RNA sequence: GGGAACGACUCGAGUAGAGUCGAAAAUCUAUUGGGCGCCCGGGCGCGAUGUGGCGAUAUCCACUAAGUACAAGGCUAGCCUUGCCUAAUACCCCAGGUGUAGCCUCCUUCGCCAUGACCUCAUCGCCACUGUAAGUUUUUUCGAAAACUUACAGUGAAAAGAAACAACAACAACAAC
Reactivity to DMS in 0.01 (KOAc 150mM, MgCl2 10mM, bicine 150mM(pH8.5), 24C), signal-to-noise 9, nucleotides 027 to 126: u010c060u000a110u010u010g000g010g020c060g020c060c030c070g010g000g010c110g020c040g010a050u000g010u000g010g020c040g010a080u010a080u000c060c080a090c120u010a070a110g010u010a070c180a100a050g020g010c020u000a110g000c010c010u000u000g010c050c030u010a070a080u010a150c090c080c020c060a050g010g010u000g010u000a060g010c020c010u000c100c070u000u000c030g000c020c020a060u000g010a100c060c040u010c040a050u010c060g010c100
Reactivity to 2A3 in 0.01 (KOAc 150mM, MgCl2 10mM, bicine 150mM(pH8.5), 24C), signal-to-noise 5, nucleotides 027 to 126: u020c020u030a130u110u130g040g010g000c030g060c040c020c020g040g040g030c050g000c010g010a020u060g010u040g020g020c030g040a030u020a060u140c030c020a060c110u070a100a020g030u030a060c050a130a020g010g000c000u020a020g000c010c000u010u030g010c010c010u090a110a060u110a110c010c000c000c030a010g000g030u090g060u050a010g000c000c010u010c020c010u040u030c010g000c000c000a030u080g050a100c000c030u060c010a040u050c020g010c020